[RMDB]
RNA sequence: GGGAACGACUCGAGUAGAGUCGAAAAAUGACUAGUAUGCAGUCAGGCACAUCAGUUAUCCCCUAGUCUAGAAGAGUUUCAACAGGAAUGGUCACAGGUCAGAGAAGAGGAACAAGGGUGGAAGGCAAUUCUGAGUGUCUUUCGAGACACUCAGAAUAAAAGAAACAACAACAACAAC
Reactivity to DMS in 0.01 (KOAc 150mM, MgCl2 10mM, bicine 150mM(pH8.5), 24C), signal-to-noise 2, nucleotides 027 to 126: a120u000g020a030c000u000a070g000u010a040u000g040c050a140g000u020c180a010g000g010c020a010c030a020u000c090a040g000u000u000a050u000c000c020c000c060u000a060g000u010c050u010a110g000a060a070g020a090g030u010u000u000c040a040a090c180a070g010g000a070a060u010g010g020u000c040a060c070a080g000g010u010c050a070g010a080g010a060a070g000a080g020g000a060a060c130a000a120g000g020g030u000g010g010a040a040g010g020c130a070

The data come from the RNA Mapping Database (RMDB), library OK2TST. The record gives the reactivity of an RNA of 177 nucleotides to DMS. The reactions ran in a buffer of 150 mM KOAc, 10 mM MgCl2 and 150 mM bicine (pH 8.5), at 24 C. Reactivities are given for positions 27 through 126. The DMS profile rests on 1,463 reads.